[RMDB]
RNA sequence: GGGAACGACUCGAGUAGAGUCGAAAAAUUUUGUGGGAGGAACGUCACGGAACCAAUUUCUCAACAUUCCGUUUCUUUCAGUGAGAGAACCGUUGCAACUGCCACGUGAGAGAAAAUUGAUUGAUUACAAGUAACAGAAGUUCGCUUCUGUUACUUGAAAAGAAACAACAACAACAAC
Reactivity to 2A3 in 0.01 (KOAc 150mM, MgCl2 10mM, bicine 150mM(pH8.5), 24C), signal-to-noise 4, nucleotides 027 to 126: a000u090u210u100u170g030u050g010g020g000a070g010g030a100a030c030g020u030c070a010c030g020g040a040a020c050c000a070a100u020u090u000c020u010c010a000a080c030a060u100u050c030c030g030u010u050u020c000u010u050u040c040a090g060u030g080a050g000a000g000a070a050c040c040g050u040u060g010c060a140a130c110u110g070c030c020a010c020g000u100g020a050g000a010g000a020a080a050a050u110u100g090a150u050u070g010a000u090u120a060
Reactivity to DMS in 0.01 (KOAc 150mM, MgCl2 10mM, bicine 150mM(pH8.5), 24C), signal-to-noise 8, nucleotides 027 to 126: a080u000u000u000u000g030u010g020g000g000a070g000g010a060a060c090g000u010c130a040c040g020g010a070a060c120c160a100a130u010u000u000c010u000c010a080a130c190a160u010u000c050c040g020u000u000u000c020u000u000u010c030a130g020u010g000a080g000a040g010a050a090c150c070g010u000u000g020c060a090a110c040u000g000c020c010a010c020g010u000g010a090g010a090g000a030a010a040a050u000u010g010a120u000u000g010a120u010u000a160